Description:
This 207-nucleotide RNA was probed chemically with 2A3 and DMS. DMS adducts were read by reverse transcription with MarathonRT. The reactions ran in a buffer of 150 mM KOAc, 10 mM MgCl2 and 150 mM bicine (pH 8.5), at 24 C. Values cover nucleotides 27 to 156.

RNA sequence: GGGAACGACUCGAGUAGAGUCGAAAAAAGUCACCCUCCUCGCAUCGCAAGUUCGUGCUUGCGACUUACAAGUAGGGCGAGGGGUGGGCGAAAGUUGCCAUGAGACCGUAACUUUCGUAGUCAUUGAAAAACUACAAAGCCUUCGGGCUUUGUAGAAGUAAGGAAUAUAGUUCGCUAUAUUCCUUACAAAAGAAACAACAACAACAAC
Reactivity to 2A3 in 0.01 (KOAc 150mM, MgCl2 10mM, bicine 150mM(pH8.5), 24C), signal-to-noise 9, nucleotides 027 to 156: a000a000g120u080c040a040c010c000c000u060c000c010u000c000g000c010a050u020c000g000c000a020a000g010u210u250c130g190u300g110c000u000u000g000c000g000a000c000u050u090a060c030a180a070g060u100a090g160g100g000c000g000a010g010g000g000g010u130g010g020g000c000g000a000a000a000g000u000u010g000c010c020a050u090g060a040g010a300c030c030g000u000a000a000c000u010u000u000c020g000u010a030g060u040c060a070u050u090g050a050a050a030a030a040c000u000a000c000a000a000a000g000c000c010u060u100c210g060g010g000c000u000u000u000g000u000a000g000a000a000
Reactivity to DMS in 0.01 (KOAc 150mM, MgCl2 10mM, bicine 150mM(pH8.5), 24C), signal-to-noise 3, nucleotides 027 to 156: a060a080g030u010c040a080c000c000c000u000c030c010u000c020g030c060a170u000c010g000c010a010a030g030u010u010c250g020u000g010c010u010u000g010c010g020a020c040u010u000a180c090a090a100g040u000a120g010g040g010c020g030a040g020g000g010g020u000g010g000g020c000g000a010a010a060g030u000u000g010c000c030a220u010g030a260g030a130c120c100g000u010a020a030c020u000u000u000c030g020u000a100g020u000c070a130u000u010g010a100a090a110a130a100c000u000a010c000a010a020a010g000c010c010u010u000c300g070g030g000c010u000u000u000g010u000a000g000a020a090